[RMDB]
RNA sequence: GGGAACGACUCGAGUAGAGUCGAAAACUGCGCUGGCCAUGGCCUGCGCCGUACAGGUACGAUCGAUCUCGUCUGGCGCUAUGCGCACAUCAUGCGCGAUCUGCAGAGCGCGUACCUGGCGCAGCGCCGGAGUAGGGUCUUUCGAGACCCUACUCCGAAAAGAAACAACAACAACAAC
Reactivity to 2A3 in 0.01 (KOAc 150mM, MgCl2 10mM, bicine 150mM(pH8.5), 24C), signal-to-noise 4, nucleotides 027 to 126: c020u040g020c000g000c030u040g010g030c060c070a220u270g060g000c010c060u050g000c040g000c000c000g050u110a090c040a100g020g020u020a010c010g010a130u180c040g020a070u060c040u020c060g110u000c070u110g050g020c000g000c050u090a070u240g000c020g040c010a020c010a150u210c030a050u100g000c020g000c000g050a070u010c040u150g010c090a030g000a030g060c010g000c000g000u010a010c000c000u000g000g010c060g000c010a020g000c010g010c020
Reactivity to DMS in 0.01 (KOAc 150mM, MgCl2 10mM, bicine 150mM(pH8.5), 24C), signal-to-noise 4, nucleotides 027 to 126: c050u000g000c030g050c020u000g010g020c110c090a100u000g040g010c060c030u000g010c020g010c000c040g010u010a080c260a010g000g020u010a030c040g010a090u000c070g000a060u020c030u000c040g000u010c060u010g000g000c010g000c020u000a090u000g020c030g000c060a090c160a110u010c120a070u000g010c010g010c020g010a050u000c090u010g010c120a170g010a070g000c040g000c010g010u000a010c040c020u000g000g000c000g010c020a020g000c060g030c030
Chemical mapping of a 177-nucleotide RNA with 2A3 and DMS. DMS adducts were read by reverse transcription with MarathonRT. 2A3 adducts were read by reverse transcription with SuperScript II with manganese.